[RMDB]
RNA sequence: GGGAACGACUCGAGUAGAGUCGAAAAGAUAUGGAGGUCACACUGGACAACAGCUAAGGUCGGAAACGACCUUAGACAUGUCCUGUGUACCUCCUAAGUCAAACAUUUGAUGUUCGCAUCAAAUGAAGAUCCCACAAUACUUCGGUAUUGUGGGAUCAAAAGAAACAACAACAACAAC
Reactivity to 2A3 in 0.01 (KOAc 150mM, MgCl2 10mM, bicine 150mM(pH8.5), 24C), signal-to-noise 2, nucleotides 027 to 126: g020a020u090a050u190g020g010a020g000g040u060c140a010c010a000c050u020g040g020a000c010a220a030c050a160g070c000u000a010a000g020g000u010c010g030g000a080a090a060c010g010a000c020c000u010u000a000g000a000c000a050u070g000u030c000c010u010g010u000g010u000a000c000c000u010c000c010u000a000a000g010u030c020a050a040a080c010a010u000u010u020g020a020u000g050u100u140c300g000c110a000u000c000a030a010a000u040g020a080a020
Reactivity to DMS in 0.01 (KOAc 150mM, MgCl2 10mM, bicine 150mM(pH8.5), 24C), signal-to-noise 3, nucleotides 027 to 126: g000a040u000a300u000g020g000a030g010g000u010c300a010c010a020c010u020g000g020a020c020a040a120c300a180g000c000u000a030a000g000g030u000c000g040g000a100a090a260c010g000a030c000c000u000u000a000g000a020c080a220u010g020u000c020c000u000g020u000g010u000a030c000c010u000c000c000u000a000a040g010u000c040a150a090a250c000a010u000u000u000g000a020u000g000u010u010c290g010c020a010u010c000a000a010a000u000g010a100a090

Source: RMDB library TTRDES, as collected in RNAgym. Structure probing data (2A3 and DMS) for a 177-nucleotide construct. For DMS, 1,766 sequencing reads were counted. Reactivities are given for positions 27 through 126. For 2A3, 4,661 sequencing reads were counted.